[RMDB]
RNA sequence: GGGAACGACUCGAGUAGAGUCGAAAACCAGGAGCAAGUAAGGAGGGGAUGAGUUGAGGUUCAACCCUCCUAAGGACGCUUAGUAGAAUCCCCCUAAAUACAAAAGCUGGGUUAUUGUUAGGCUCCCGGAGUCAGUAUCAUUCGUGAUACUGACUCCAAAAGAAACAACAACAACAAC
Reactivity to 2A3 in 0.01 (KOAc 150mM, MgCl2 10mM, bicine 150mM(pH8.5), 24C), signal-to-noise 2, nucleotides 027 to 126: c030c000a000g000g030a050g000c070a110a030g100u230a080a060g000g000a020g000g000g060g040a160u140g040a080g020u070u110g130a090g010g220u020u010c020a000a040c000c000c000u020c010c000u000a000a000g030g000a020c040g000c020u030u060a010g010u020a010g090a090a120u170c000c000c000c000c000u040a060a080a090u100a050c030a020a180a020a000g030c040u060g150g000g000u070u050a060u060u020g060u040u060a050g100g000c000u000c010c000c000
Reactivity to DMS in 0.01 (KOAc 150mM, MgCl2 10mM, bicine 150mM(pH8.5), 24C), signal-to-noise 3, nucleotides 027 to 126: c000c000a170g050g020a000g010c040a140a210g030u010a100a040g000g000a030g010g000g010g010a170u030g010a040g020u000u020g020a130g030g000u020u000c010a030a190c000c000c000u000c000c000u000a000a060g000g030a160c170g010c000u000u000a300g000u000a010g010a180a180u010c020c000c000c000c000u000a090a120a140u000a050c020a040a100a060a000g030c000u000g000g000g010u000u010a050u000u010g010u000u000a130g020g000c010u000c020c020c210